[RMDB]
RNA sequence: GGGAACGACUCGAGUAGAGUCGAAAAUUCCAACUCCGGCUGGUGUGAAGAAGGAGCCGUUCCACGCAGGACGCGAACAAGACGAAGCCGAAGCAACUUCAGGACGCCGCGCACGAACUGGCGCCCGAUCUCCGCCCCGCACGAGUAGGUUUCCCCGGUCUAUAAGGGUGUUCGCACCCUUAUAGACAAAAGAAACAACAACAACAAC
Reactivity to 2A3 in 0.01 (KOAc 150mM, MgCl2 10mM, bicine 150mM(pH8.5), 24C), signal-to-noise 1, nucleotides 027 to 156: u110u000c000c000a000a010c000u030c110c080g040g000c120u070g000g050u090g050u160g140a100a070g010a070a080g020g000a010g020c000c000g000u020u010c150c030a110c030g020c080a210g000g120a080c010g030c050g110a150a030c040a170a000g150a120c080g020a010a000g050c020c000g120a100a040g060c150a150a020c010u090u020c100a080g040g020a030c010g010c010c000g050c010g000c040a050c070g000a050a000c040u100g000g000c020g140c050c000c000g210a200u030c020u070c000c010g020c000c010c000c020g020c000a050c010g040a000g030u010a050g000g000u000u080u000c000c000c000c000g040
The record gives the reactivity of an RNA of 207 nucleotides to 2A3. For 2A3, 546 sequencing reads were counted. Values are in units of 0.01, from 0 to 300, in steps of 10. Source: RMDB library VIROID, as collected in RNAgym.